The data come from the RNA Mapping Database (RMDB), library ARCHII. This 207-nucleotide RNA was probed chemically with 2A3 and DMS. High DMS reactivity at an A or C suggests that its Watson-Crick edge is free. The RNA was probed in 150 mM KOAc, 10 mM MgCl2 and 150 mM bicine (pH 8.5) at 24 C. For DMS the reverse transcriptase was MarathonRT.

[RMDB]
RNA sequence: GGGAACGACUCGAGUAGAGUCGAAAAGCUCAAUGGUGGAAUUGUACACCUUGGGAUUUCUGACUUUGGUUCAAUCCUCGCAGUCGGACGUAGGUUAGCAUGUCACGUUUCGGCGUGGCAAGGGGUACUCACCUUCCCGUGGGGCUCCGCACUGCGCGAUUAAUUGUCAGUUCGCUGACAAUUAAUCAAAAGAAACAACAACAACAAC
Reactivity to 2A3 in 0.01 (KOAc 150mM, MgCl2 10mM, bicine 150mM(pH8.5), 24C), signal-to-noise 8, nucleotides 027 to 156: g040c000u000c000a020a080u290g000g010u040g040g090a300a300u240u250g080u160a050c000a000c000c000u010u000g010g000g000a020u030u020u000c080u110g020a020c000u050u050u150g120g020u200u200c050a050a070u060c030c020u000c010g000c090a010g000u010c010g020g020a030c060g040u060a050g030g110u080u080a040g050c060a050u040g010u000c010a000c030g000u000u040u080c200g090g000c000g000u000g010g000c010a020a030g030g000g000g010u100a300c000u000c020a000c000c000u080u110c020c040c000g010u030g000g020g000g000c010u000c000c000g020c010a050c030u030g000c040g010c010
Reactivity to DMS in 0.01 (KOAc 150mM, MgCl2 10mM, bicine 150mM(pH8.5), 24C), signal-to-noise 1, nucleotides 027 to 156: g000c020u000c010a000a000u000g030g010u020g000g000a140a240u010u010g010u000a190c000a020c010c010u010u000g000g000g010a070u000u000u000c000u000g020a030c010u000u000u000g000g010u010u020c160a140a200u020c120c000u000c040g000c070a030g030u000c020g000g020a100c110g040u000a060g000g000u000u000a140g080c100a180u010g010u000c020a030c060g000u000u000u000c220g030g030c010g070u010g010g020c000a050a070g010g020g030g020u000a090c040u000c010a030c000c040u000u000c100c110c030g000u020g040g020g040g010c000u000c040c000g010c140a070c120u010g000c020g010c090